[RMDB]
RNA sequence: GGGAACGACUCGAGUAGAGUCGAAAAACGCCACUCUGGAAGCUUGACACUCCAGCCGGCUCGCAUCUCCGCAGUGGCAGUGGAGUACAAAGUCCGCUCCCGGCAAGUCACACAGGUGAAUACAUAAGAGUCGCAGCACCACAGGGUCACAGCAGGCGGAGACCAAUAGAUUCGUCUAUUGGUCUCCAAAAGAAACAACAACAACAAC
Reactivity to 2A3 in 0.01 (KOAc 150mM, MgCl2 10mM, bicine 150mM(pH8.5), 24C), signal-to-noise 1, nucleotides 027 to 156: a000c040g040c020c000a030c020u070c030u050g000g080a100a020g010c050u050u060g030a040c000a000c060u030c010c020a020g040c060c010g010g000c010u040c050g070c000a100u110c080u010c060c000g000c100a000g000u020g030g050c040a020g100u120g110g000a020g010u050a070c090a070a190a010g100u020c080c000g000c000u000c000c010c010g020g080c080a070a020g000u000c020a000c000a020c060a070g100g030u030g050a130a100u170a130c100a040u100a080a090g010a020g010u030c060g000c040a010g000c000a050c070c030a020c040a010g000g040g020u000c010a000c070a090g030c010a050g060g040c060